[RMDB]
Chemical mapping of a 177-nucleotide RNA with 2A3 and DMS. For DMS the reverse transcriptase was MarathonRT. 2A3 is a SHAPE reagent: it acylates the 2'-hydroxyl of flexible nucleotides of all four kinds. For 2A3 the reverse transcriptase was SuperScript II with manganese. It was measured as part of the RMDB library M2PK50. In probing experiments dimethyl sulfate is read out at A N1 and C N3, which are open when not base-paired.
RNA sequence: GGGAACGACUCGAGUAGAGUCGAAAAGGCUUCACCUUCGGGUGAAGCCAAAUAAGCGAGAUCGCCGGAUAGCUGCCUAAGCGAGAUCGCCGGAUAGGUGCCAAAGGAUUCCGUUCGCGGAAUCCAAUCUAUAGAUCAACUUCGGUUGAUCUAUAGAAAAAGAAACAACAACAACAAC
Reactivity to 2A3 in 0.01 (KOAc 150mM, MgCl2 10mM, bicine 150mM(pH8.5), 24C), signal-to-noise 3, nucleotides 027 to 126: g000g000c000u010u000c000a010c020c000u030u060c250g050g020g010u000g000a000a000g000c000c000a000a000a000u000a000a000g010c000g000a000g000a020u010c010g010c040c030g020g000a080u120a160g070c110u130g050c110c010u030a050a000g000c010g000a010g010a030u010c000g000c020c010g010g020a040u070a130g100g040u070g090c020c020a080a080a100g000g010a000u010u000c020c000g000u040u050c290g000c020g070g000a000a010u000c000c000a000a000
Reactivity to DMS in 0.01 (KOAc 150mM, MgCl2 10mM, bicine 150mM(pH8.5), 24C), signal-to-noise 5, nucleotides 027 to 126: g000g000c000u000u000c000a000c000c000u010u010c220g010g010g030u000g010a010a010g010c000c000a000a020a020u010a140a120g010c010g010a020g000a180u000c010g020c020c050g010g000a080u010a110g010c180u010g000c010c000u000a160a110g010c000g010a020g000a180u000c010g020c000c030g010g000a130u010a080g010g010u000g010c030c040a100a100a110g000g010a030u000u000c000c000g010u000u010c190g030c000g000g000a020a000u000c000c000a030a020
Conditions: 150 mM KOAc, 10 mM MgCl2 and 150 mM bicine (pH 8.5), 24 C.